[RMDB]
This 177-nucleotide RNA was probed chemically with DMS. The data come from the RNA Mapping Database (RMDB), library RFMREP. Values cover nucleotides 27 to 126. The RNA was probed in 150 mM KOAc, 10 mM MgCl2 and 150 mM bicine (pH 8.5) at 24 C. For DMS the reverse transcriptase was MarathonRT. The DMS profile rests on 865 reads.
RNA sequence: GGGAACGACUCGAGUAGAGUCGAAAAGCGAAAGCAUCUGCCAGGGACGUUUCUGUUGAUCAAGAACGAAAGUUAGGGGAUCGAAGAUGAUUAGAUACCGUUGUAGUCCUAACCAUAAACUUUACUAGAGAGAAAGUAGGUUCGCCUACUUUCUCUCAAAAGAAACAACAACAACAAC
Reactivity to DMS in 0.01 (KOAc 150mM, MgCl2 10mM, bicine 150mM(pH8.5), 24C), signal-to-noise 1, nucleotides 027 to 126: g000c050g010a060a130a120g010c010a110u000c040u000g010c010c100a170g040g000g000a070c050g020u010u020u010c030u020g020u000u030g010a060u010c040a090a030g010a040a030c090g010a040a050a090g000u000u000a040g000g000g020g010a020u000c020g020a070a120g010a060u000g000a030u010u010a060g000a070u020a050c050c030g020u000u000g050u000a090g000u000c030c010u000a040a060c080c080a070u000a050a070a090c060u000u000u010a070c170u010a180